RNA sequence: GGGAACGACUCGAGUAGAGUCGAAAAGAUAUGGACAAGGUGGAGUGCUUGGAUUUAGGGUCGGAAACGACCCUUGUCAGCACCCACUUGUCCUAAGUCAAAACUUUAAGUCUUCGGACUUAAAGAAUCCUAUAACGUGGUUCGCCACGUUAUAGGAAAAAGAAACAACAACAACAAC
Reactivity to DMS in 0.01 (KOAc 150mM, MgCl2 10mM, bicine 150mM(pH8.5), 24C), signal-to-noise 2, nucleotides 027 to 126: g000a020u000a300u000g000g010a010c000a010a010g010g020u000g010g010a120g040u000g020c000u010u020g030g020a020u010u020u000a020g020g000g000u000c000g000g020a060a120a280c000g010a010c000c000c000u000u000g000u000c000a020g000c000a000c000c000c010a020c010u000u000g010u000c000c000u010a010a130g020u000c040a110a130a110a180c010u000u010u000a000a010g000u000c000u000u010c250g040g000a040c000u010u000a000a000a020g010a110a120
Reactivity to 2A3 in 0.01 (KOAc 150mM, MgCl2 10mM, bicine 150mM(pH8.5), 24C), signal-to-noise 2, nucleotides 027 to 126: g020a030u030a030u150g000g000a000c020a000a030g290g160u150g020g160a300g070u020g010c040u160u270g160g050a060u300u300u200a040g000g000g000u010c020g040g000a080a080a040c020g010a000c000c020c010u000u000g000u000c010a000g000c000a000c030c000c000a000c000u000u000g000u000c000c020u000a080a020g040u010c020a020a040a170a070c000u010u000u030a010a000g020u030c010u040u150c300g140g010a010c010u020u000a000a000a000g010a000a090